[RMDB]
RNA sequence: GGGAACGACUCGAGUAGAGUCGAAAAGUGUGCUAUACUAGUAAGGUUGAAUGAAUCAACCCUUGGUGCUUAGCUUGUUUCACCAAGCAUAUUACACGCGGAUAACCGCCAAAGGAGAAAAGAUGAACUGCCCGACGAUUCUUCGGAAUCGUCGGAACACUAUUGCGAUGUUCGCAUCGCAAUAGUGAAAAGAAACAACAACAACAAC
Reactivity to 2A3 in 0.01 (KOAc 150mM, MgCl2 10mM, bicine 150mM(pH8.5), 24C), signal-to-noise 4, nucleotides 027 to 156: g060u040g030u030g030c040u060a040u030a270c060u080a090g100u100a070a080g020g020u000u020g030a090a140u140g080a080a100u080c000a000a010c000c000c010u010u000g010g000u010g000c040u060u050a050g020c020u080u060g010u020u100u070c030a020c000c010a000a000g010c000a020u020a060u120u140a050c080a000c040g010c020g030g030a090u110a270a160c010c010g030c050c030a100a100a040g100g020a090g050a020a060a050a020g080a050u170g030a070a060c040u080g030c000c000c020g000a000c000g000a010u010u010c000u030u070c160g020g000a000a000u000c000g000u000c000g000g000a000a000
Reactivity to DMS in 0.01 (KOAc 150mM, MgCl2 10mM, bicine 150mM(pH8.5), 24C), signal-to-noise 2, nucleotides 027 to 156: g020u000g000u010g010c010u000a060u000a070c060u000a150g000u010a070a100g010g020u000u000g000a060a170u020g020a200a220u010c010a040a000c000c000c020u000u000g010g010u000g020c040u000u000a120g000c070u000u000g030u000u000u000c020a060c090c010a030a010g000c040a070u020a060u000u000a070c050a070c080g020c000g050g020a130u000a050a090c060c010g000c020c030a030a070a050g020g010a110g010a060a070a080a190g010a150u020g000a030a100c080u000g030c080c000c000g020a030c000g000a020u000u000c010u000u000c300g020g000a030a000u000c000g000u020c000g000g010a010a040

Chemical mapping of a 207-nucleotide RNA with 2A3 and DMS.
It was measured as part of the RMDB library M2RFPK.
High 2A3 reactivity points to a flexible backbone, as in loops and unpaired stretches.
The DMS profile rests on 2,752 reads.
The reactions ran in a buffer of 150 mM KOAc, 10 mM MgCl2 and 150 mM bicine (pH 8.5), at 24 C.